Structure probing data (DMS and 2A3) for a 177-nucleotide construct. Source: RMDB library OK2TST, as collected in RNAgym. The 2A3 profile rests on 3,982 reads. The RNA was probed in 150 mM KOAc, 10 mM MgCl2 and 150 mM bicine (pH 8.5) at 24 C. DMS adducts were read by reverse transcription with MarathonRT. 2A3 is a SHAPE reagent: it acylates the 2'-hydroxyl of flexible nucleotides of all four kinds. For DMS, 6,248 sequencing reads were counted.

[RMDB]
RNA sequence: GGGAACGACUCGAGUAGAGUCGAAAAUGAAUUUCAGCCAGGCACGCCCGAAUUGCGAUCUGGACUAUGUGCCGAAUGAAUUUCGCGAUCGCAAAGUGAACAUCUUCAUGAAGAAUAACUAUGCCUAACGGUUUUAAAUAUUCGUAUUUAAAACCGUAAAAGAAACAACAACAACAAC
Reactivity to DMS in 0.01 (KOAc 150mM, MgCl2 10mM, bicine 150mM(pH8.5), 24C), signal-to-noise 6, nucleotides 027 to 126: u020g010a100a070u000u000u000c030a070g030c130c130a100g000g000c010a020c030g010c020c020c040g010a090a140u000u010g010c050g000a040u000c010u010g020g010a090c080u000a080u010g020u010g010c020c020g000a090a080u010g010a070a060u000u000u000c030g040c170g000a030u000c060g020c030a030a060a080g020u000g000a070a140c160a070u000c030u010u000c060a070u000g010a070a050g010a060a060u010a080a070c070u000a080u000g000c020c070u000a120
Reactivity to 2A3 in 0.01 (KOAc 150mM, MgCl2 10mM, bicine 150mM(pH8.5), 24C), signal-to-noise 3, nucleotides 027 to 126: u060g020a010a020u040u050u080c020a040g060c020c020a000g010g000c000a000c030g000c000c010c000g020a050a080u080u030g040c050g040a030u010c020u090g030g040a030c050u150a140u300g060u130g010c020c010g020a040a040u090g020a040a000u050u080u020c040g000c030g040a050u020c020g000c030a030a040a020g070u060g020a040a030c020a120u040c030u090u070c040a100u140g050a060a070g020a030a010u050a050a020c020u050a050u090g010c020c010u010a040